[RMDB]
RNA sequence: GGGAACGACUCGAGUAGAGUCGAAAAUACCGAAGAAGCAAAAUUAGAGGGAAGUCUACCUCUAAUAGAAACUGACAGGUAGGAGUAAGGUUGGUGGACGAAACUUUGGAGAGAAUGUAAUUAAUACCGGUAAACUCGUAUUCGUACGAGUUUACCGAAAAGAAACAACAACAACAAC
Reactivity to 2A3 in 0.01 (KOAc 150mM, MgCl2 10mM, bicine 150mM(pH8.5), 24C), signal-to-noise 2, nucleotides 027 to 126: u090a050c000c040g050a090a020g030a050a000g100c030a020a090a020a000u000u010a010g000a000g000g070g040a100a000g160u030c070u050a050c000c000u000c000u000a000a000u020a000g000a000a150a000c050u050g040a010c030a110g020g010u060a020g010g070a010g030u120a210a020g010g070u050u120g040g080u050g000g060a010c010g070a010a050a140c050u100u050u010g130g020a120g000a040g130a080a100u010g010u050a090a000u220u090a110a150u140a180c090
Reactivity to DMS in 0.01 (KOAc 150mM, MgCl2 10mM, bicine 150mM(pH8.5), 24C), signal-to-noise 3, nucleotides 027 to 126: u050a110c000c010g000a060a120g000a130a060g000c090a020a140a100a000u000u000a000g000a020g000g060g020a130a170g000u020c170u030a130c020c000u000c020u020a000a000u000a060g000a060a110a110c030u010g010a120c150a080g000g020u000a020g020g020a090g010u030a060a060g000g000u000u000g020g000u040g000g000a060c070g000a060a100a050c070u000u010u000g010g020a070g000a060g010a050a040u000g000u010a030a070u020u040a060a120u060a070c070
Conditions: 150 mM KOAc, 10 mM MgCl2 and 150 mM bicine (pH 8.5), 24 C.
An RNA of 177 nucleotides, treated with 2A3 and DMS and read out base by base.
For 2A3, 610 sequencing reads were counted.
For DMS the reverse transcriptase was MarathonRT.
High 2A3 reactivity points to a flexible backbone, as in loops and unpaired stretches.